[RMDB]
RNA sequence: GGGAACGACUCGAGUAGAGUCGAAAACCAUUCCUUAUACCUUGAGUAUUGCUGAAUUCAGUUUAGCGUGCAUGCUCUUGGCUAUUCUCAUAGUGAUUGACAAAUUUGGAGUUACUUAUUCGUCAAUAAAACACUACCACGUUCGCGUGGUAGUGAAUCUAAACGUAUUGUUCGCAAUACGUUUAGAAAAAGAAACAACAACAACAAC
Reactivity to DMS in 0.01 (KOAc 150mM, MgCl2 10mM, bicine 150mM(pH8.5), 24C), signal-to-noise 4, nucleotides 027 to 156: c030c020a160u010u000c020c010u000u000a180u010a030c020c010u000u000g010a030g050u000a040u000u000g030c000u010g000a080a090u000u000c170a240g010u000u000u000a060g010c030g010u020g040c120a210u000g010c010u000c000u010u000g010g020c010u000a100u000u000c030u000c070a160u000a110g000u000g010a050u000u000g000a040c010a030a020a040u000u010u000g010g010a300g020u000u010a080c020u000u000a030u010u000c020g010u000c010a020a030u000a050a100a110a140c010a020c000u000a000c000c010a020c010g020u000u010c300g050c020g080u000g000g010u010a000g000u000g000a030a050
Reactivity to 2A3 in 0.01 (KOAc 150mM, MgCl2 10mM, bicine 150mM(pH8.5), 24C), signal-to-noise 9, nucleotides 027 to 156: c030c000a020u050u070c020c020u150u140a070u040a110c000c010u010u010g010a010g010u030a060u160u170g010c000u030g050a150a140u220u190c090a160g150u100u080u170a070g030c070g030u060g040c030a010u020g000c000u000c000u010u010g000g000c000u040a040u100u080c100u030c070a100u100a120g150u120g170a050u020u000g010a010c020a030a070a050u050u040u060g120g020a200g140u150u140a120c020u030u050a020u060u050c030g010u010c010a020a030u050a080a100a010a000c000a000c000u000a000c000c000a000c000g020u050u050c160g020c000g090u000g000g010u000a000g000u000g000a000a000
Structure probing data (DMS and 2A3) for a 207-nucleotide construct. Conditions: 150 mM KOAc, 10 mM MgCl2 and 150 mM bicine (pH 8.5), 24 C. As a SHAPE reagent, 2A3 marks flexible, mostly unpaired nucleotides at the ribose 2'-OH. Source: RMDB library M2RFPK, as collected in RNAgym. 2A3 adducts were read by reverse transcription with SuperScript II with manganese.